[RMDB]
RNA sequence: GGGAACGACUCGAGUAGAGUCGAAAAAUAUAUAUAUAUUCUGACACUUCGUCACGCGUCGCCGCUGGAGUUGCCGUAGGUAACGAAAUGGUCUGUCAUGACCGUAUGACUGAUCGGACUCCUGUUCACUCAGGUAGCGUUUCGACGCUACCUGAGUAAAAGAAACAACAACAACAAC
Reactivity to 2A3 in 0.01 (KOAc 150mM, MgCl2 10mM, bicine 150mM(pH8.5), 24C), signal-to-noise 1, nucleotides 027 to 126: a000u070a000u030a000u080a000u040a010u000a160u170u000c080u060g040a030c000a020c060u060u030c120g150u080c030a020c090g000c000g030u030c000g000c000c040g000c080u070g000g000a010g000u060u120g160c000c000g050u080a020g000g040u040a020a040c020g010a110a180a240u180g010g010u020c030u070g300u240c060a190u220g030a050c030c030g020u110a140u090g030a050c000u000g020a040u170c000g000g000a060c000u020c010c040u040g030u070u250c060
An RNA of 177 nucleotides, treated with 2A3 and read out base by base. Values are in units of 0.01, from 0 to 300, in steps of 10. The 2A3 profile rests on 366 reads. Source: RMDB library OK1LIB, as collected in RNAgym. The reactions ran in a buffer of 150 mM KOAc, 10 mM MgCl2 and 150 mM bicine (pH 8.5), at 24 C. For 2A3 the reverse transcriptase was SuperScript II with manganese.